[RMDB]
RNA sequence: GGGAACGACUCGAGUAGAGUCGAAAAGAAUGUGUAGAGCACUGAAACCACGAGGAGGAGGUGUGGUGUCUGUCUGAGCAUGAAGCUGGUUAUUGGUGUUGCUUCUGCAGCUGCCAUUAGCCAUUGAAUUUCUACCGCCAUUCGUGGCGGUAGAAAUAAAAGAAACAACAACAACAAC
Reactivity to DMS in 0.01 (KOAc 150mM, MgCl2 10mM, bicine 150mM(pH8.5), 24C), signal-to-noise 3, nucleotides 027 to 126: g000a110a060u020g000u000g040u030a060g000a130g000c080a040c070u000g000a130a100a110c020c020a050c060g000a070g000g010a030g020g000a080g010g000u030g000u000g010g010u000g000u010c030u000g010u000c030u010g010a060g000c050a090u000g000a110a140g030c090u000g000g010u000u000a010u000u000g000g040u000g010u010u000g010c000u020u030c210u040g010c050a020g000c000u030g000c020c020a030u000u010a020g000c010c000a090u020u020g020a120
Reactivity to 2A3 in 0.01 (KOAc 150mM, MgCl2 10mM, bicine 150mM(pH8.5), 24C), signal-to-noise 4, nucleotides 027 to 126: g040a010a100u110g040u030g020u150a010g000a010g070c040a010c070u060g030a100a040a030c040c010a050c060g060a090g010g040a020g020g010a050g000g040u020g010u040g030g020u030g030u020c050u020g070u000c040u080g030a030g020c010a070u100g080a080a010g080c040u010g020g010u040u010a020u030u020g000g000u030g110u300u100g020c000u100u120c080u210g010c000a010g000c000u100g020c010c010a030u020u000a000g000c020c000a040u030u090g030a020